[RMDB]
RNA sequence: GGGAACGACUCGAGUAGAGUCGAAAAGAGCUUUUCGAAGCUCAAUCCAGAUAUGGAUUGAGGGAGCUAAGGAACUACGUCGCCAGUCGGAAACGACUGGGACUGACGCCUUAGCGAAGAACUCAAUCCUAAGUCCUUAGUCGGGAUUCGUCCCGAACAAACUAUGUGACUUCGGUCACAUAGUUUGAAAAGAAACAACAACAACAAC
Reactivity to DMS in 0.01 (KOAc 150mM, MgCl2 10mM, bicine 150mM(pH8.5), 24C), signal-to-noise 2, nucleotides 027 to 156: g000a000g000c000u000u000u000u000c290g040a070a110g000c010u000c010a040a050u000c000c000a300g000a180u010a230u000g000g000a010u010u010g030a020g000g000g000a300g000c000u010a050a010g010g020a060a140c050u000a190c100g000u000c010g060c020c000a050g020u000c010g000g000a170a150a170c030g020a000c010u010g010g020g040a060c000u030g000a090c100g010c020c010u000u000a030g000c020g010a020a080g000a070a210c020u000c000a000a030u020c000c010u010a040a270g010u010c020c040u000u010a090g000u000c010g020g000g020a080u010u000c100g000u020c010c010c000g030a080a230
Reactivity to 2A3 in 0.01 (KOAc 150mM, MgCl2 10mM, bicine 150mM(pH8.5), 24C), signal-to-noise 3, nucleotides 027 to 156: g000a000g000c010u030u070u110u190c220g130a030a010g000c000u000c000a000a030u010c020c000a040g010a060u130a030u130g000g000a000u000u000g000a000g000g010g010a010g000c000u000a000a000g020g020a140a130c100u120a040c260g010u000c020g010c110c000a000g000u000c000g020g050a040a040a170c010g010a000c000u000g000g010g050a020c010u030g000a010c020g020c000c000u000u000a000g010c000g010a000a050g000a010a010c000u010c000a000a000u000c000c010u020a070a010g060u030c020c010u100u180a060g040u080c010g000g040g000a030u060u100c120g120u010c040c000c000g000a020a010